[RMDB]
RNA sequence: GGGAACGACUCGAGUAGAGUCGAAAAGAUGUCUCUUCGGAGACAUCAAAAAAGCGUACUACUUGAUGCAGCAGAGGACCGUAUCCCAAAUAGGAUACGUCCGACGAAGCUGAACUACAUCAAGUAUCGCAAAAACAAUGGUAUUCGUACCAUUGAAGCUUUAACAUGUGUUCGCACAUGUUAAAGCAAAAGAAACAACAACAACAAC
Reactivity to 2A3 in 0.01 (KOAc 150mM, MgCl2 10mM, bicine 150mM(pH8.5), 24C), signal-to-noise 4, nucleotides 027 to 156: g020a010u010g000u000c000u000c000u030u100c200g030g000a010g000a000c000a000u020c000a010a050a000a000a000a000g040c060g030u120a070c040u000a000c000u030u000g000a010u010g000c010a000g000c010a000g010a060g080g000a010c040c150g010u000a000u010c000c000c020a190a290a080u300a080g000g000a000u000a000c000g010u000c000c010g030a060c030g030a060a020g000c000u000g020a060a020c100u220a060c100a000u000c000a000a000g000u010a010u170c000g000c030a030a030a000a070a000c010a000a000u010g010g000u020a040u040u100c220g040u070a020c000c000a000u000u000g030a050a020
Reactivity to DMS in 0.01 (KOAc 150mM, MgCl2 10mM, bicine 150mM(pH8.5), 24C), signal-to-noise 2, nucleotides 027 to 156: g010a030u010g010u000c000u000c000u000u000c260g040g010a010g040a020c000a000u020c000a010a030a040a060a070a140g010c020g030u010a120c210u000a020c000u000u000g000a000u020g020c030a060g040c050a050g030a300g000g000a020c130c070g060u000a010u000c000c000c020a060a160a290u000a030g000g000a030u000a030c000g040u000c010c000g000a150c180g010a110a160g060c070u000g020a050a150c010u010a050c020a030u000c000a060a030g010u000a020u000c030g030c010a030a050a060a090a080c020a000a020u000g030g000u000a120u010u000c250g050u000a000c010c000a020u000u020g000a080a080